[RMDB]
RNA sequence: GGGAACGACUCGAGUAGAGUCGAAAAAGCGGACAGGCAAGGUGGAGAUGACACCAGAGCUGACAGAGCUUGAGCGGGACGGCCUCCUCAAAGCCACCUCCUUUGACAGCACCCGGCUGCUGCUGCACUCACCUACUAAGUUCGCUUAGUAGGUGAGAAAAGAAACAACAACAACAAC
Reactivity to DMS in 0.01 (KOAc 150mM, MgCl2 10mM, bicine 150mM(pH8.5), 24C), signal-to-noise 5, nucleotides 027 to 126: a090g000c060g000g000a090c110a080g000g000c060a110a090g000g010u000g000g010a130g010a110u000g010a160c060a070c060c030a120g000a120g010c020u000g000a100c180a100g000a070g010c040u000u000g010a100g020c080g000g010g000a080c110g000g000c030c010u010c060c030u000c070a040a040a110g000c020c020a040c060c050u000c040c020u000u000u000g020a140c080a050g000c030a070c030c030c050g000g010c040u000g020c090u000g010c040u000g010c100a200
Reactivity to 2A3 in 0.01 (KOAc 150mM, MgCl2 10mM, bicine 150mM(pH8.5), 24C), signal-to-noise 3, nucleotides 027 to 126: a000g040c040g010g030a040c030a040g040g030c020a010a080g040g010u050g030g040a140g010a110u110g060a030c010a010c020c000a020g010a020g020c030u040g040a070c050a040g120a010g020c020u070u060g020a040g060c070g010g000g020a040c060g080g000c010c000u040c010c010u040c070a090a040a000g020c020c010a020c000c000u050c000c010u020u060u130g080a080c030a010g000c020a040c020c030c030g060g000c020u020g010c020u020g000c010u030g010c010a030